[RMDB]
RNA sequence: GGGAACGACUCGAGUAGAGUCGAAAAGCGUACUACUAAGGAGGCUGUGUGCCAGAGCACGUCCCAAAUAGGACGUAAAGAGUGCUCGGUAAUACACAGCUCCCCACCCUUAGUAUCGCAAAAGUUCACGGCUGUAGUUCGCUACAGCCGUGAACAAACUCUAUACAAGGUUCGCCUUGUAUAGAGUAAAAGAAACAACAACAACAAC
Reactivity to DMS in 0.01 (KOAc 150mM, MgCl2 10mM, bicine 150mM(pH8.5), 24C), signal-to-noise 1, nucleotides 027 to 156: g040c010g010u010a050c050u000a010c050u020a050a140g040g000a250g020g000c010u000g040u000g040u010g010c050c070a110g020a040g040c000a050c010g010u000c000c010c020a030a210a240u010a040g020g000a020c040g030u000a120a110a220g000a300g000u000g000c010u000c020g000g000u000a070a070u010a190c010a030c000a040g000c010u000c010c020c000c080a290c160c020c040u000u000a040g010u000a040u000c010g020c020a070a080a080a130g010u010u010c000a020c020g070g000c020u000g000u000a020g020u000u000c220g010c000u000a000c010a020g060c000c000g000u000g010a010a000c020a040a050
Reactivity to 2A3 in 0.01 (KOAc 150mM, MgCl2 10mM, bicine 150mM(pH8.5), 24C), signal-to-noise 3, nucleotides 027 to 156: g000c000g020u070a090c030u000a000c010u000a040a010g010g000a000g010g000c000u000g010u000g000u020g030c060c090a150g000a000g000c010a000c050g010u060c000c010c000a160a260a110u210a050g000g010a010c020g050u110a070a180a120g190a090g030u020g010c000u000c000g010g000u030a060a030u090a060c000a000c010a000g000c000u030c010c000c010c010a030c000c000c010u000u010a010g050u030a060u300c010g000c010a020a030a060a070g000u000u000c000a000c000g000g000c000u000g000u000a020g030u050u050c260g000c160u000a000c010a000g000c010c000g000u000g000a000a000c000a000a000